[RMDB]
Overview
Conditions: 150 mM KOAc, 10 mM MgCl2 and 150 mM bicine (pH 8.5), 24 C. Chemical mapping of a 177-nucleotide RNA with 2A3 and DMS. 2A3 adducts were read by reverse transcription with SuperScript II with manganese. DMS adducts were read by reverse transcription with MarathonRT. The data come from the RNA Mapping Database (RMDB), library M2PK50.
RNA sequence: GGGAACGACUCGAGUAGAGUCGAAAAGAACCGCGAUUCGUCGCGGUUCGAGCGCCGUAGCGCGCAACGGCGUAACGGCAGCAUUAGCGCGCAGCUGCCCACGAUCGGGUGGUUUCGACCACCCGAAUCGCGUCAUAAGAUUCGUCUUAUGACGCGAAAAAGAAACAACAACAACAAC
Reactivity to 2A3 in 0.01 (KOAc 150mM, MgCl2 10mM, bicine 150mM(pH8.5), 24C), signal-to-noise 4, nucleotides 027 to 126: g000a000a000c000c000g000c010g020a020u030u050c170g020u020c000g140c000g010g020u000u000c000g000a000g000c010g010c010c010g040u060a040g060c030g020c010g010c060a020a020c030g020g030c010g040u070a120a070c060g050g000c020a010g000c030a080u060u160a030g020c030g000c020g000c060a030g000c010u030g000c010c020c020a120c080g080a110u050c000g000g010g000u010g000g010u020u050u120c130g040a000c000c000a000c000c000c000g000a000a000
Reactivity to DMS in 0.01 (KOAc 150mM, MgCl2 10mM, bicine 150mM(pH8.5), 24C), signal-to-noise 4, nucleotides 027 to 126: g010a000a000c010c000g030c000g020a030u000u010c200g020u000c000g020c000g000g020u010u000c000g000a100g010c020g000c000c030g010u000a080g020c020g000c020g000c020a070a030c100g000g000c000g010u000a080a090c140g010g000c030a040g020c040a070u000u010a100g010c020g020c030g040c040a190g000c030u000g010c000c000c150a080c190g010a110u000c010g000g000g020u000g000g010u000u000u010c190g000a040c000c000a010c000c010c000g000a010a020